[RMDB]
RNA sequence: GGGAACGACUCGAGUAGAGUCGAAAAAAUGUAUAAUUUGUUAGCAUGCCUUUGGCUUUUACGCAAGUUUUAUCAGCAUGUAAUCAAUGGUUGCAAAGAUACGGCAUGCUUGCUCUGCUAUAAGAGGACCCUCAUCUCUUCGGAGAUGAGAAAAGAAACAACAACAACAAC
Reactivity to DMS in 0.01 (KOAc 150mM, MgCl2 10mM, bicine 150mM(pH8.5), 24C), signal-to-noise 9, nucleotides 027 to 129: a030a020u060g020u020a060u050a050a040u010u010u010g030u030u060a050g050c030a000u040g020c020c040u000u000u000g000g000c060u010u000u030u060a070c220g030c140a080a090g040u000u020u030u010a080u020c050a110g030c050a120u000g020u040a020a030u030c090a090a100u000g050g040u050u040g030c050a040a100a070g010a060u030a070c200g020g030c030a030u000g010c000u000u000g000c020u020c010u020g000c050u010a050u040a090a050g020a050g000g000a090c050c000
Reactivity to 2A3 in 0.01 (KOAc 150mM, MgCl2 10mM, bicine 150mM(pH8.5), 24C), signal-to-noise 9, nucleotides 027 to 129: a000a000u260g070u060a210u070a180a100u050u040u070g090u060u050a000g010c000a000u000g000c020c000u080u060u140g090g010c000u050u050u070u130a060c120g010c060a030a060g010u010u050u070u120a110u080c020a000g080c020a040u050g060u090a030a050u070c110a060a100u130g110g010u030u020g010c020a060a060a020g020a010u070a070c030g000g000c000a000u010g000c000u000u010g000c000u010c020u020g020c020u040a050u010a280a050g000a010g010g020a020c000c000
Structure probing data (DMS and 2A3) for a 170-nucleotide construct. Conditions: 150 mM KOAc, 10 mM MgCl2 and 150 mM bicine (pH 8.5), 24 C. It was measured as part of the RMDB library 15KLIB. 2A3 adducts were read by reverse transcription with SuperScript II with manganese.